The data come from the RNA Mapping Database (RMDB), library OK2TRN. The record gives the reactivity of an RNA of 177 nucleotides to DMS and 2A3. For DMS, 3,014 sequencing reads were counted. 2A3 adducts were read by reverse transcription with SuperScript II with manganese. The RNA was probed in 150 mM KOAc, 10 mM MgCl2 and 150 mM bicine (pH 8.5) at 24 C. As a SHAPE reagent, 2A3 marks flexible, mostly unpaired nucleotides at the ribose 2'-OH. For 2A3, 1,455 sequencing reads were counted.
[RMDB]
RNA sequence: GGGAACGACUCGAGUAGAGUCGAAAAGUUAGAUAAGGGCUCCCUGCUUCAUAGAUGGCAUCUUCCUGCUGUUUUUCAUGUGGCAGAAGGGCCAAAGAAGCUCUCUUGGGCUUCUUAUUGUAAAGGCGCAUAGAAAGGUUUUCGAACCUUUCUAUGCAAAAGAAACAACAACAACAAC
Reactivity to DMS in 0.01 (KOAc 150mM, MgCl2 10mM, bicine 150mM(pH8.5), 24C), signal-to-noise 3, nucleotides 027 to 126: g000u010u010a090g000a120u010a100a070g020g010g040c020u000c020c130c030u000g000c000u000u000c020a030u000a070g000a090u010g000g010c000a040u010c180u010u000c250c130u010g010c040u000g010u000u010u000u030u000c190a020u000g000u010g000g010c000a010g010a080a190g000g010g000c000c000a040a030a030g000a020a010g000c000u000c010u020c250u000u000g010g010g000c010u000u000c000u000u000a020u000u000g010u010a060a100a150g000g010c220
Reactivity to 2A3 in 0.01 (KOAc 150mM, MgCl2 10mM, bicine 150mM(pH8.5), 24C), signal-to-noise 1, nucleotides 027 to 126: g020u050u050a060g000a190u150a160a110g120g000g010c010u000c000c000c000u000g000c010u010u020c010a090u020a090g040a030u030g020g000c000a060u040c130u130u050c010c030u000g000c000u010g040u070u060u000u040u130c050a040u060g030u030g000g000c000a000g010a000a000g000g010g000c000c000a020a000a010g000a000a000g020c000u000c010u000c030u080u200g020g000g030c000u060u000c010u030u050a160u130u090g070u090a070a080a060g090g060c090